[RMDB]
RNA sequence: GGGAACGACUCGAGUAGAGUCGAAAAUCUCAGCUUUGUCAUAUGCCGGCAAACGUCUGGUGAAGGAUUUUAGUGUCAAAGGACAGAUGGUUAGCUUACAGGAGGAAGGCGAGGAGUAUACGCCGCGCACUUGCUCUUAGUUCGCUAAGAGCAAGUGAAAAGAAACAACAACAACAAC
Reactivity to 2A3 in 0.01 (KOAc 150mM, MgCl2 10mM, bicine 150mM(pH8.5), 24C), signal-to-noise 4, nucleotides 027 to 126: u030c010u000c030a010g020c030u070u110u080g040u070c020a050u080a080u270g040c030c030g010g000c030a130a080a100c040g050u020c040u050g050g030u080g090a090a040g050g000a020u060u070u080u130a120g040u090g030u050c030a080a100a050g060g010a040c010a020g060a020u060g030g050u070u070a000g020c010u040u070a040c040a010g000g060a020g020g040a130a020g000g000c010g010a030g010g010a020g040u060a060u000a100c060g030c030c010g020c010g000
Reactivity to DMS in 0.01 (KOAc 150mM, MgCl2 10mM, bicine 150mM(pH8.5), 24C), signal-to-noise 5, nucleotides 027 to 126: u000c000u010c010a180g020c070u000u000u000g030u010c030a080u010a120u000g020c060c040g000g010c020a070a070a080c160g010u000c040u000g010g010u000g000a150a100g000g010a050u010u010u010u010a070g020u000g010u000c040a050a070a100g010g010a080c060a030g000a050u000g010g010u000u000a070g010c030u010u000a060c090a080g000g010a090g000g000a100a080g000g010c040g020a090g010g000a070g020u000a090u010a090c100g010c030c020g010c160g020